[RMDB]
RNA sequence: GGGAACGACUCGAGUAGAGUCGAAAAGCAGAUGUCUGGAUUUGGUAGCCAGGGCCUGGAGCCGGAUGCUGAGAAUGAGGCCUGCAACUCAUUUCCCCAUUAAACAUUCUGAGAACAUCUGCACCGGCCAUACAUCUAAGUUCGCUUAGAUGUAUGGAAAAGAAACAACAACAACAAC
Reactivity to 2A3 in 0.01 (KOAc 150mM, MgCl2 10mM, bicine 150mM(pH8.5), 24C), signal-to-noise 5, nucleotides 027 to 126: g000c000a000g010a030u010g020u030c020u060g000g060a060u030u120u150g040g020u050a040g040c020c020a060g040g030g050c020c050u130g070g010a020g020c010c010g020g000a030u090g020c040u040g040a030g060a150a040u040g010a020g030g100c030c090u100g010c060a050a050c000u030c040a020u040u030u030c010c000c020c020a080u120u220a070a110a020c020a030u090u040c020u080g130a050g020a130a020c010a010u000c010u000g030c010a000c010c000g020g020
Reactivity to DMS in 0.01 (KOAc 150mM, MgCl2 10mM, bicine 150mM(pH8.5), 24C), signal-to-noise 4, nucleotides 027 to 126: g000c010a010g000a020u000g010u000c010u000g010g000a060u000u000u000g010g020u000a090g020c010c040a110g000g010g010c090c020u000g010g000a140g020c020c020g000g000a050u000g010c030u000g000a080g010a050a030u000g000a050g000g010c060c060u000g010c100a060a090c040u010c030a050u000u000u000c010c010c040c110a100u020u010a060a060a120c100a050u000u000c020u000g000a070g010a100a050c020a020u000c010u000g010c000a210c030c040g010g000
This 177-nucleotide RNA was probed chemically with 2A3 and DMS. The data come from the RNA Mapping Database (RMDB), library RFMREP. The RNA was probed in 150 mM KOAc, 10 mM MgCl2 and 150 mM bicine (pH 8.5) at 24 C. For DMS, 5,627 sequencing reads were counted. DMS adducts were read by reverse transcription with MarathonRT. 2A3 adducts were read by reverse transcription with SuperScript II with manganese.